RNA sequence: GGGAACGACUCGAGUAGAGUCGAAAAUGUUAAGUCAGGCAACGAGCGAGACCCAUUUCCACUGUUGCUAACGACUCCGCGAGGAGGGCGAGUACACUGUGGAGACCGCUGGCGCUAAGUCAGAGGAAUUCAGUGAUACCUUCGGGUAUCACUGAAUAAAAGAAACAACAACAACAAC
Reactivity to DMS in 0.01 (KOAc 150mM, MgCl2 10mM, bicine 150mM(pH8.5), 24C), signal-to-noise 4, nucleotides 027 to 126: u020g020u000u010a090a100g020u000c050a090g000g000c080a070a130c020g000a080g010c020g010a090g020a160c040c020c030a190u030u020u000c000c000a010c000u010g010u010u010g000c010u000a040a020c000g000a120c000u000c000c010g000c300g000a190g000g010a040g000g010g020c000g000a020g000u010a010c130a020c030u010g020u000g000g000a020g000a100c020c010g020c000u000g020g000c010g010c190u030a060a120g000u000c010a000g000a040g000g000a150
Reactivity to 2A3 in 0.01 (KOAc 150mM, MgCl2 10mM, bicine 150mM(pH8.5), 24C), signal-to-noise 5, nucleotides 027 to 126: u170g010u080u080a070a050g070u070c060a020g010g060c020a020a020c070g010a030g030c030g040a040g040a110c000c030c030a080u080u080u000c000c010a010c020u040g040u060u040g050c010u020a040a000c000g010a010c000u000c010c010g040c060g040a060g010g010a010g000g030g040c000g000a000g000u000a020c040a010c180u020g010u000g010g000a010g020a010c000c010g000c010u000g000g010c040g010c170u140a170a000g010u000c010a010g010a020g050g030a050
Description: Structure probing data (DMS and 2A3) for a 177-nucleotide construct. Reactivities are given for positions 27 through 126. The RNA was probed in 150 mM KOAc, 10 mM MgCl2 and 150 mM bicine (pH 8.5) at 24 C. For DMS the reverse transcriptase was MarathonRT.